[RMDB]
RNA sequence: GGGAACGACUCGAGUAGAGUCGAAAAGGCGUAGCCGACAACAUGCCCAGGUAGCCCAGACCUUCAAGGCUACGGUGCCUUGCGACGCACGGUCUGAUUCUUCACAACGACGUUCACCGCGUCUUCUACAACCGGCAAAGAUUCGUCUUUGCCGGAACUUUAGAUUCAGGUUCGCCUGAAUCUAAAGAAAAGAAACAACAACAACAAC
Reactivity to 2A3 in 0.01 (KOAc 150mM, MgCl2 10mM, bicine 150mM(pH8.5), 24C), signal-to-noise 5, nucleotides 027 to 156: g020g000c090g070u090a030g030c020c010g060a020c040a140a030c030a100u150g030c020c000c020a030g010g020u040a010g020c000c060c030a030g020a030c020c000u050u040c050a050a030g000g000c020u050a060c060g010g040u070g000c000c010u090u120g030c090g090a070c060g060c030a030c040g000g010u000c010u010g050a100u100u080c060u140u160c060a040c050a240a080c120g020a010c010g060u160u160c060a030c080c040g000c010g000u000c000u070u040c030u080a090c010a140a090c000c010g000g000c000a000a000a000g010a010u060u120c160g030u000c090u000u000u000g000c000c020g000g010a000a000
Reactivity to DMS in 0.01 (KOAc 150mM, MgCl2 10mM, bicine 150mM(pH8.5), 24C), signal-to-noise 3, nucleotides 027 to 156: g000g030c040g020u000a100g000c010c020g030a280c060a080a070c050a060u010g020c020c010c020a120g020g030u000a040g020c040c010c140a130g010a120c050c030u000u000c060a090a210g000g010c010u000a020c070g030g030u000g050c050c060u000u010g010c070g010a070c040g030c020a090c040g030g040u000c010u010g020a140u000u010c080u000u010c100a140c090a070a160c060g020a040c020g020u010u000c080a100c070c030g010c030g000u010c010u010u000c060u000a090c110a130a210c020c000g000g000c010a000a000a010g020a100u000u010c280g000u000c000u000u000u000g010c000c000g010g000a010a000